The record gives the reactivity of an RNA of 177 nucleotides to DMS. The reactions ran in a buffer of 150 mM KOAc, 10 mM MgCl2 and 150 mM bicine (pH 8.5), at 24 C. It was measured as part of the RMDB library M2PK90. Values cover nucleotides 27 to 126. For DMS, 1,474 sequencing reads were counted.
RNA sequence: GGGAACGACUCGAGUAGAGUCGAAAAGUAGUGCUCGAGAGGGAGGCUGUCUCGCAGAGCUUUUAGUUCUUCUGAUCUUUCCCUCCUCCAUAUCGCUUAUGCGUCAAGCGAUAGACGCAUAAUUAAAUAUAUCUGCUAUCUUCGGAUAGCAGAUAUAAAAAGAAACAACAACAACAAC
Reactivity to DMS in 0.01 (KOAc 150mM, MgCl2 10mM, bicine 150mM(pH8.5), 24C), signal-to-noise 2, nucleotides 027 to 126: g000u010a070g010u000g020c030u010c050g010a060g010a190g000g000g020a040g000g010c140u010g000u000c050u010c040g040c220a070g020a180g020c020u000u010u000u010a060g000u000u000c010u020u000c130u000g000a040u010c020u010u000u010c020c000c020u010c020c010u010c000c040a110u010a050u000c030g020c220u000u010a000u000g000c000g030u000c000a050a120g010c240g020a120u010a060g010a010c010g010c000a010u000a010a020u010u000a030a060a090